[RMDB]
RNA sequence: GGGAACGACUCGAGUAGAGUCGAAAAGCUCUGCGAGACAGAUCGAACAACAAAGAGAGAUCGAAAAUCUUAGAGGAGAGAACGAAUCUCUCGACUUCACUAGGACAUUGUCGAUCAGAGGUCCAAAGACCAUUGAUGGGUUCGCCUAUCGAUGGUCAAAAGAAACAACAACAACAAC
Reactivity to 2A3 in 0.01 (KOAc 150mM, MgCl2 10mM, bicine 150mM(pH8.5), 24C), signal-to-noise 9, nucleotides 027 to 126: g020c000u000c000u010g020c030g010a040g010a030c010a020g050a070u040c030g050a060a050c030a050a010c020a020a260a000g030a000g000a000g020a000u010c010g050a070a040a040a060u000c010u030u090a090g030a060g270g070a020g020a000g020a050a020c030g020a080a150u010c000u000c000u000c000g030a040c020u100u080c030a040c120u080a040g020g050a020c020a120u050u080g010u010c000g000a010u010c010a000g010a010g030g020u000c000c000a010a030a010
Reactivity to DMS in 0.01 (KOAc 150mM, MgCl2 10mM, bicine 150mM(pH8.5), 24C), signal-to-noise 9, nucleotides 027 to 126: g010c010u000c000u000g000c030g000a300g000a040c060a050g000a030u000c020g000a090a130c190a060a050c190a070a120a120g010a030g010a110g000a010u010c000g010a050a050a080a200u000c000u000u000a090g020a160g020g000a030g000a030g010a060a150c060g000a060a070u000c010u000c000u000c000g000a160c210u010u010c090a070c100u010a050g000g000a070c150a080u020u020g000u000c020g000a140u000c010a030g000a040g000g000u010c010c020a060a090a080
Chemical mapping of a 177-nucleotide RNA with 2A3 and DMS. Values cover nucleotides 27 to 126. The reactions ran in a buffer of 150 mM KOAc, 10 mM MgCl2 and 150 mM bicine (pH 8.5), at 24 C.